[RMDB]
RNA sequence: GGGAACGACUCGAGUAGAGUCGAAAACAGCAACAGAUGUUGGCCGCUGUUGGCGCCAACUCGUUAAGUACAUUGAUCCAGCAGAUUGUUCCGGCAGAUAUCCAAUUGCCAAGCCCGCCUCCGGUGGAAAGCGAACUUGGUUCGCCAAGUUCGCUUUAAAAGAAACAACAACAACAAC
Reactivity to 2A3 in 0.01 (KOAc 150mM, MgCl2 10mM, bicine 150mM(pH8.5), 24C), signal-to-noise 1, nucleotides 027 to 126: c000a000g080c040a000a000c000a070g030a080u090g050u020u010g020g010c160c020g000c000u040g160u300u150g090g000c000g010c030c030a000a000c020u010c000g040u030u120a120a020g020u060a080c040a140u020u160g040a030u080c020c000a010g020c010a000g070a200u070u110g050u100u040c030c000g000g050c030a000g020a060u000a040u090c050c030a040a110u130u020g010c020c010a020a020g000c010c000c000g000c020c010u100c040c020g030g010u060g060g100
Reactivity to DMS in 0.01 (KOAc 150mM, MgCl2 10mM, bicine 150mM(pH8.5), 24C), signal-to-noise 3, nucleotides 027 to 126: c090a100g000c090a060a040c070a140g000a020u000g030u000u000g000g010c060c070g020c020u000g000u010u000g000g020c110g020c030c000a010a030c020u000c040g020u010u010a060a110g020u010a060c150a090u000u010g000a070u010c020c030a070g010c030a040g000a130u000u000g010u010u000c070c050g000g020c020a060g010a080u000a050u000c070c100a060a160u000u000g020c040c080a060a140g010c060c010c000g030c030c030u000c050c040g000g020u020g020g000
An RNA of 177 nucleotides, treated with 2A3 and DMS and read out base by base.
It was measured as part of the RMDB library OK2TST.
2A3 adducts were read by reverse transcription with SuperScript II with manganese.